Chemical mapping of a 207-nucleotide RNA with 2A3 and DMS. 2A3 is a SHAPE reagent: it acylates the 2'-hydroxyl of flexible nucleotides of all four kinds. For DMS, 1,988 sequencing reads were counted. For DMS the reverse transcriptase was MarathonRT. The reactions ran in a buffer of 150 mM KOAc, 10 mM MgCl2 and 150 mM bicine (pH 8.5), at 24 C. Source: RMDB library M2RFPK, as collected in RNAgym. For 2A3, 1,287 sequencing reads were counted. Values are in units of 0.01, from 0 to 300, in steps of 10.
[RMDB]
RNA sequence: GGGAACGACUCGAGUAGAGUCGAAAAAUCAGCCUUCGUUCUGUAAACGGGGUUGGAUCCGACUCUCAUAGGCUCUCCAACCCAACUCCUACUCAAUACGUCCUCGUCGUAAAGAACGGUAACAUGUAAAACGAAGGCUGCUUCGGCAGCCUUCGAACGUUAAAGACCUGUUCGCAGGUCUUUAACGAAAAGAAACAACAACAACAAC
Reactivity to 2A3 in 0.01 (KOAc 150mM, MgCl2 10mM, bicine 150mM(pH8.5), 24C), signal-to-noise 2, nucleotides 027 to 156: a000u050c010a030g020c030c030u170u110c030g050u040u060c070u070g120u100a060a060a080c040g000g000g000g000u000u000g060g000a070u300c010c000g100a100c040u090c010u020c160a150u120a180g040g000c010u000c000u000c010c000a010a000c000c000c000a010a010c000u000c000c000u030a060c010u010c030a070a060u040a230c020g030u050c030c000u040c030g050u000c000g040u110a140a080a090g050a110a000c030g040g010u070a050a040c050a120u260g030u240a100a100a000a000c000g000a000a000g000g010c000u000g000c010u010u010c030g080g000c000a000g000c000c020u000u000c000g000a010a000
Reactivity to DMS in 0.01 (KOAc 150mM, MgCl2 10mM, bicine 150mM(pH8.5), 24C), signal-to-noise 1, nucleotides 027 to 156: a070u000c020a080g010c000c010u010u010c030g020u000u010c050u020g010u010a160a130a060c060g010g020g060g030u000u000g010g020a030u000c020c040g020a050c050u010c100u000c070a170u010a130g020g000c010u000c110u030c040c040a110a100c010c000c020a070a040c040u000c040c010u000a040c030u000c050a050a100u010a080c030g010u000c000c000u000c000g000u010c050g000u000a110a070a040g010a040a020c010g000g000u020a020a070c080a100u000g000u000a070a070a100a200c000g030a040a020g050g000c000u010g000c020u000u010c230g030g030c040a050g090c000c010u030u010c000g020a000a060